Source information:
Structure probing data (DMS) for a 177-nucleotide construct. For DMS, 1,185 sequencing reads were counted.

RNA sequence: GGGAACGACUCGAGUAGAGUCGAAAAGCUGUAGCCGGAUUUCGGCCUUUAUCUAAGCACUGGUAUGUCUGUAGUUCUCUCUUUCCGGGCUAGAGCAAGUGCUGAAAGCCAAGGUGAUAAAGGUGACUGUAAUGCUAGCGUUCGCGCUAGCAUUACAAAAAGAAACAACAACAACAAC
Reactivity to DMS in 0.01 (KOAc 150mM, MgCl2 10mM, bicine 150mM(pH8.5), 24C), signal-to-noise 1, nucleotides 027 to 126: g000c030u010g040u000a130g030c020c000g020g000a140u020u000u000c140g010g020c010c010u000u000u010a020u000c010u000a200a070g000c020a020c010u000g010g030u000a100u020g010u010c040u000g000u000a080g030u000u000c050u010c070u000c080u010u000u000c080c000g010g020g010c020u010a020g000a030g000c030a040a040g000u000g010c010u000g020a110a060a150g030c110c130a090a100g010g020u000g000a050u010a010a020a060g010g040u000g020a150c190

Record summary: It was measured as part of the RMDB library OK2TST.